[RMDB]
RNA sequence: GGGAACGACUCGAGUAGAGUCGAAAAUCGAGCGCAAAUUCGACAAGUGGCAGGAGCCGCCGCCUGUGAAGCAGGUGAAGCCGCUGCCUGCGCCCCUGGAUGGACAGCGGAAGAAGCGAGGCGGCCGUGCAACGUUGGGAUUCGUCCCAACGUUGCAAAAAGAAACAACAACAACAAC
Reactivity to 2A3 in 0.01 (KOAc 150mM, MgCl2 10mM, bicine 150mM(pH8.5), 24C), signal-to-noise 1, nucleotides 027 to 126: u010c000g000a000g000c020g010c200a000a070a120u040u010c000g090a000c070a170a020g040u100g040g010c020a000g000g100a020g000c000c000g000c060c060g000c000c030u000g000u060g180a110a000g110c000a000g000g000u000g020a020a020g020c030c000g000c000u000g050c000c020u030g000c040g000c000c000c000c000u000g040g060a050u140g090g000a050c000a000g000c020g020g040a050a100g040a020a000g200c100g000a020g030g000c000g000g040c000c000g050
Reactivity to DMS in 0.01 (KOAc 150mM, MgCl2 10mM, bicine 150mM(pH8.5), 24C), signal-to-noise 1, nucleotides 027 to 126: u010c090g000a070g010c030g000c070a050a100a180u020u020c050g010a020c090a150a080g010u020g000g010c110a140g000g000a150g000c010c000g010c010c040g000c000c040u000g050u000g000a110a060g030c030a000g000g000u000g000a200a200g000c000c030g030c000u010g000c000c000u000g000c030g000c000c000c010c040u010g000g000a200u040g040g010a060c060a010g000c030g010g030a070a090g000a100a080g010c100g000a210g000g050c000g010g010c000c000g000